[RMDB]
RNA sequence: GGGAACGACUCGAGUAGAGUCGAAAAUGGCGGGUUAGAUGAAUCUAAUCCAUGGUCAUCCACUUUAUAAAUACAUAAAAGGACAGUUUUAUGAUUGUCAGCUUUGAGUUGAGGAUAUGUUCCAGACCUUAGAAGACAUAUUCGUAUGUCUUCUAAGAAAAGAAACAACAACAACAAC
Reactivity to DMS in 0.01 (KOAc 150mM, MgCl2 10mM, bicine 150mM(pH8.5), 24C), signal-to-noise 8, nucleotides 027 to 126: u010g010g020c210g010g010g010u000u000a000g000a060u010g010a220a110u000c010u010a010a010u000c000c010a110u020g030g020u000c010a090u000c030c030a080c100u010u010u010a060u010a070a100a110u020a070c050a060u010a080a010a030a040g010g000a040c030a020g010u000u000u020u020a090u040g000a020u000u000g000u000c010a100g000c040u000u010u000g010a160g000u020u000g000a070g010g000a110u010a050u010g000u000u000c000c010a080g000a220c120
Reactivity to 2A3 in 0.01 (KOAc 150mM, MgCl2 10mM, bicine 150mM(pH8.5), 24C), signal-to-noise 9, nucleotides 027 to 126: u030g010g010c030g010g000g020u000u000a020g010a060u140g220a210a240u050c000u010a000a000u000c000c010a010u080g100g000u020c010a040u030c010c010a060c030u080u170u040a160u070a080a190a030u170a030c030a010u120a060a070a010a010g030g000a010c010a020g010u010u030u070u160a230u270g070a030u020u030g010u000c030a050g120c050u060u060u080g070a060g020u040u040g040a040g030g030a060u050a040u280g050u050u000c010c000a010g030a060c020